An RNA of 177 nucleotides, treated with DMS and 2A3 and read out base by base.
It was measured as part of the RMDB library OK1LIB.
RNA sequence: GGGAACGACUCGAGUAGAGUCGAAAAGAUGAGUGCACUCGCAUGUGACAGUGAGUUACAUGACGUUGACUCUACGUUAUGUAAGGUGUAUGUCACAUUACACCUGCACUCAUGGUAGAGUCAAUAAGGUAGUGCAUGAUUUCGAUCAUGCACUACCAAAAGAAACAACAACAACAAC
Reactivity to DMS in 0.01 (KOAc 150mM, MgCl2 10mM, bicine 150mM(pH8.5), 24C), signal-to-noise 2, nucleotides 027 to 126: g020a100u010g000a000g070u010g000c030a030c000u010c000g040c010a000u040g040u080g040a170c300a120g010u000g000a000g000u000u000a000c000a000u000g000a000c010g010u010u000g000a000c010u000c000u000a060c010g010u010u000a000u000g000u000a000a000g000g000u010g030u000a000u000g000u000c270a090c160a060u000u000a020c000a010c000c000u000g020c000a000c020u000c010a020u000g000g040u000a000g010a000g000u000c000a130a040u000a000a000
Reactivity to 2A3 in 0.01 (KOAc 150mM, MgCl2 10mM, bicine 150mM(pH8.5), 24C), signal-to-noise 3, nucleotides 027 to 126: g120a010u000g000a000g010u010g010c000a010c000u000c010g030c030a110u230g150u220g290a110c120a050g010u000g030a000g010u020u000a000c000a000u020g020a010c000g020u010u090g000a010c000u040c010u010a000c000g000u000u010a000u000g000u000a010a000g040g010u000g010u000a030u040g120u160c040a020c000a110u000u020a000c000a000c000c000u000g000c000a000c000u000c000a000u000g000g000u010a000g000a000g000u000c000a000a020u000a000a000
Background: For DMS the reverse transcriptase was MarathonRT. For DMS, 2,421 sequencing reads were counted. Conditions: 150 mM KOAc, 10 mM MgCl2 and 150 mM bicine (pH 8.5), 24 C.